RNA sequence: GGGAACGACUCGAGUAGAGUCGAAAAACGGAGACGUCUGAGCGCUGUGUGCAUUCAGGGUAUUUGCCAAGGUAAUUGCCCUCCCCAGCCGCCGCCCUCUGUUGGCCUAAAGCUCCGUCCAGCAGACAGUUACUUAGCUUUUCGAAGCUAAGUAACUAAAAGAAACAACAACAACAAC
Reactivity to 2A3 in 0.01 (KOAc 150mM, MgCl2 10mM, bicine 150mM(pH8.5), 24C), signal-to-noise 3, nucleotides 027 to 126: a000c010g030g010a030g030a020c040g070u040c100u100g020a020g010c030g000c030u010g030u020g080u170g150c030a070u070u130c080a020g030g000g030u020a040u000u040u040g000c000c030a100a070g180g000u040a070a080u050u060g010c010c000c010u020c010c000c000c010a000g000c020c010g000c000c000g000c000c040c000u000c010u040g130u080u090g020g010c000c010u120a210a150a020g000c010u000c020c000g060u000c000c010a040g000c000a020g070a140c030
Reactivity to DMS in 0.01 (KOAc 150mM, MgCl2 10mM, bicine 150mM(pH8.5), 24C), signal-to-noise 4, nucleotides 027 to 126: a080c030g010g000a060g010a090c130g020u000c050u010g010a080g020c210g020c030u000g010u010g010u000g030c050a080u000u010c130a040g010g000g020u010a050u000u000u000g010c020c040a070a120g050g000u010a030a040u010u000g010c000c000c010u010c030c010c020c030a110g000c020c030g010c040c030g000c010c060c030u000c030u010g000u000u010g000g000c060c060u020a070a080a180g000c040u000c030c020g000u000c020c000a070g010c060a060g000a130c250
Chemical mapping of a 177-nucleotide RNA with 2A3 and DMS. For DMS the reverse transcriptase was MarathonRT.